[RMDB]
RNA sequence: GGGAACGACUCGAGUAGAGUCGAAAAGGCAGCGAAUUCGUUCGCUGCCAAUACAGGACGUGGAGCCGGCUUCACGGCGCUCGUCGAUGACGCCCGGGCCGGAGAAUCCAGAUUUCGAUCUGGAUAACAAAUUCGGAGUAUUCGUACUCCGAAUUUGAAAAGAAACAACAACAACAAC
Reactivity to 2A3 in 0.01 (KOAc 150mM, MgCl2 10mM, bicine 150mM(pH8.5), 24C), signal-to-noise 1, nucleotides 027 to 126: g000g000c000a000g000c000g020a000a000u060u110c200g030u070u000c000g030c000u010g020c000c000a000a010u020a030c000a000g090g070a020c050g060u060g020g040a070g070c010c010g000g040c010u200u140c120a060c090g000g010c020g050c090u040c020g130u090c060g070a160u170g030a040c010g020c000c010c000g000g040g030c020c000g000g000a000g030a010a000u020c020c000a010g000a010u090u070u060c120g010a000u020c000u010g000g000a010u030a090a030
Reactivity to DMS in 0.01 (KOAc 150mM, MgCl2 10mM, bicine 150mM(pH8.5), 24C), signal-to-noise 3, nucleotides 027 to 126: g010g020c000a010g000c000g010a040a030u010u010c220g010u000u000c000g020c000u000g020c000c000a010a000u000a080c120a070g000g010a070c050g010u010g010g000a100g000c000c000g010g000c030u000u010c040a050c070g010g000c040g010c080u000c020g010u000c120g010a150u010g010a040c020g010c010c000c030g010g000g000c010c000g000g000a080g010a110a060u000c000c000a010g000a030u000u000u020c160g000a020u000c000u000g000g000a030u000a080a170
Structure probing data (2A3 and DMS) for a 177-nucleotide construct. High DMS reactivity at an A or C suggests that its Watson-Crick edge is free. Conditions: 150 mM KOAc, 10 mM MgCl2 and 150 mM bicine (pH 8.5), 24 C. The data come from the RNA Mapping Database (RMDB), library M2PK50. 2A3 adducts were read by reverse transcription with SuperScript II with manganese.